[RMDB]
RNA sequence: GGGAACGACUCGAGUAGAGUCGAAAAAUGAUAAUAGCAAUGGUUUAGGUCUUGCAAUUACAAAAUCCAUCAUUGAAUUGCAUCAUGGUACAAUCCAAUUCACACAAAGUAACGAGUAUGUAACCACCAAUGCUAACGACUUCGGUCGUUAGCAUUGAAAAGAAACAACAACAACAAC
Reactivity to 2A3 in 0.01 (KOAc 150mM, MgCl2 10mM, bicine 150mM(pH8.5), 24C), signal-to-noise 2, nucleotides 027 to 126: a000u060g040a000u020a070a040u050a100g030c030a010a090u120g030g000u080u090u100a080g050g020u020c000u000u040g000c020a040a090u090u010a060c020a020a060a050a090u020c070c010a020u040c040a040u010u060g070a070a060u030u030g010c000a020u000c020a030u080g040g000u090a070c040a050a010u000c040c010a050a050u100u130c050a060c020a000c010a070a080a020g030u030a130a050c030g000a020g010u040a090u300g040u020a020a030c000c000a000c010
Reactivity to DMS in 0.01 (KOAc 150mM, MgCl2 10mM, bicine 150mM(pH8.5), 24C), signal-to-noise 2, nucleotides 027 to 126: a080u000g000a050u000a050a090u020a040g000c030a070a020u000g000g000u000u000u000a100g000g030u010c040u010u000g030c050a140a040u000u000a070c030a010a020a150a070u010c020c020a020u000c080a170u030u000g000a010a040u020u000g010c120a010u010c080a040u000g000g020u000a040c140a070a050u000c070c030a030a090u000u010c080a060c100a030c140a090a020a110g010u000a070a130c050g000a040g030u000a020u000g000u000a040a160c040c000a110c260